[RMDB]
RNA sequence: GGGAACGACUCGAGUAGAGUCGAAAAGAUAUGGACGUCGCGAUAAGCAUCGUUCGGAAACGAACGUAUGCUUUUGACGCGAAGUCCUAAGUCAAAAGUAUCUUACGGGUUCGCCCGUAAGAUACAACGACUAGUCACAGUUCGCUGUGACUAGUCGAAAAGAAACAACAACAACAAC
Reactivity to 2A3 in 0.01 (KOAc 150mM, MgCl2 10mM, bicine 150mM(pH8.5), 24C), signal-to-noise 1, nucleotides 027 to 126: g040a020u050a010u090g000g010a000c010g040u000c030g020c000g030a080u050a300a030g000c010a000u010c000g020u010u010c020g000g000a040a020a020c020g000a000a020c020g140u180a020u050g000c030u030u000u070u040g060a010c000g000c000g020a000a010g010u000c000c000u010a060a000g020u020c040a030a060a020a130g010u000a000u010c000u030u020a000c010g000g030g090u060u160c300g130c060c000c000g000u000a000a000g000a000u000a000c000a000a010
Reactivity to DMS in 0.01 (KOAc 150mM, MgCl2 10mM, bicine 150mM(pH8.5), 24C), signal-to-noise 2, nucleotides 027 to 126: g010a030u000a170u010g010g000a040c000g010u010c000g000c010g010a120u000a040a020g020c000a010u000c020g010u000u010c000g000g000a020a080a130c000g040a010a020c000g030u020a010u010g000c000u000u010u010u000g000a220c040g000c010g000a020a040g010u000c000c000u000a010a020g000u000c010a060a080a100a160g010u000a000u010c000u000u010a010c000g000g000g010u010u020c300g000c000c000c000g010u000a000a000g010a000u000a000c000a070a090